[RMDB]
RNA sequence: GGGAACGACUCGAGUAGAGUCGAAAACUGCCUUCGGGCAGCGCGGAGGGGUCUUGGCCGGCGAGGGUAGGACAUGAGCUGAAGCCUCCACGGCUCAACAGCCUACCUACCCACCGCUGCCAAGACGGAGGCACCCCAACGAUGGAUUCGUCCAUAAGACGGAAAUAUCGUUCGCGAUAUUUCCGUCAAAAGAAACAACAACAACAAC
Reactivity to 2A3 in 0.01 (KOAc 150mM, MgCl2 10mM, bicine 150mM(pH8.5), 24C), signal-to-noise 2, nucleotides 027 to 156: c050u010g010c000c020u040u040c230g110g010g000c010a020g030c060g000c030g000g100a100g010g010g000g020u000c000u020u000g030g000c130c070g040g000c080g080a110g000g000g000u010a010g000g030a110c120a300u100g020a110g040c010u050g030a140a000g000c030c010u160c250c170a120c130g010g000c000u010c070a100a120c000a020g000c000c000u000a000c000c010u000a000c010c020c020a050c060c090g000c060u000g010c000c000a010a000g000a000c010g000g000a000g000g010c030a030c000c000c000c000a040a040c080g030a030u050g010g000a030u010u190c160g040u040c060c050a130u110a200a070
An RNA of 207 nucleotides, treated with 2A3 and read out base by base.
For 2A3, 1,417 sequencing reads were counted.
The RNA was probed in 150 mM KOAc, 10 mM MgCl2 and 150 mM bicine (pH 8.5) at 24 C.
It was measured as part of the RMDB library RNAMAK.